[RMDB]
RNA sequence: GGGAACGACUCGAGUAGAGUCGAAAAUAAAUACCUCGGCCUAUACGGCGGAAAUUAUCCGUGGGGCGAUCAACGGGCUUCCGAAAGGCGAGGUGGAAGCCGCCAAAGCUUAUGGUAUGAGCCGUUAGCAGUCAAAAUUAUUCGUAAUUUUGACUGCAAAAGAAACAACAACAACAAC
Reactivity to 2A3 in 0.01 (KOAc 150mM, MgCl2 10mM, bicine 150mM(pH8.5), 24C), signal-to-noise 1, nucleotides 027 to 126: u030a030a040a030u100a020c000c010u030c030g160g010c000c000u100a080u010a120c050g030g020c080g010g040a000a130a060u280u070a060u100c000c000g000u030g000g140g050g000c030g020a060u160c030a020a050c040g000g060g070c000u050u000c010c030g070a180a070a040g080g000c050g000a020g000g050u030g020g000a000a000g000c000c030g060c040c020a080a050a030g030c040u140u070a070u240g050g000u080a050u070g030a010g020c000c020g020u010u080a040
Reactivity to DMS in 0.01 (KOAc 150mM, MgCl2 10mM, bicine 150mM(pH8.5), 24C), signal-to-noise 2, nucleotides 027 to 126: u000a080a110a120u000a080c040c010u010c080g030g000c010c020u000a110u000a060c090g020g020c090g000g010a050a090a120u010u010a080u010c010c000g090u000g000g010g010g010c090g020a150u010c100a070a070c080g020g000g010c070u000u000c030c010g010a090a110a170g050g000c020g000a120g000g030u000g000g010a050a050g010c040c020g000c030c050a050a100a280g020c030u010u000a050u000g000g020u000a140u000g000a080g000c010c010g010u010u000a080